About this RNA:
Conditions: 150 mM KOAc, 10 mM MgCl2 and 150 mM bicine (pH 8.5), 24 C. This 177-nucleotide RNA was probed chemically with DMS and 2A3. For DMS the reverse transcriptase was MarathonRT. For 2A3, 1,603 sequencing reads were counted.
RNA sequence: GGGAACGACUCGAGUAGAGUCGAAAAGAAGAGAGUCGACGCAAGCGACGAUAACUGCGGAACGGUAACCGUAGUACCGUACGGUCAUGGCACGCGAAAGCGAAAGAACGCAUCAUGCCAUAAGAGAGGUCCCAUUUAGUUUCGACUAAAUGGGACCAAAAGAAACAACAACAACAAC
Reactivity to DMS in 0.01 (KOAc 150mM, MgCl2 10mM, bicine 150mM(pH8.5), 24C), signal-to-noise 2, nucleotides 027 to 126: g000a090a100g000a220g000a130g000u000c060g000a000c020g000c180a010a120g010c020g000a000c050g000a090u000a040a100c010u000g000c000g000g000a090a060c180g000g000u010a020a080c000c040g000u010a090g010u000a020c020c080g000u000a050c090g000g000u050c060a000u000g080g010c040a110c110g000c040g000a060a060a200g020c070g000a070a040a090g020a030a090c070g020c000a070u020c070a120u020g000c000c020a020u000a050a180g030a110g000a090
Reactivity to 2A3 in 0.01 (KOAc 150mM, MgCl2 10mM, bicine 150mM(pH8.5), 24C), signal-to-noise 1, nucleotides 027 to 126: g120a070a000g090a000g100a040g060u020c030g020a070c010g020c100a070a140g070c000g010a070c060g020a010u100a090a040c020u070g000c060g000g060a090a000c050g040g090u170a060a010c070c000g010u030a000g000u000a030c020c000g010u040a010c060g030g010u060c020a000u010g010g000c000a010c030g110c000g070a140a080a000g050c050g010a070a050a020g080a140a040c010g020c010a030u010c000a000u030g000c000c000a020u040a110a030g220a010g000a020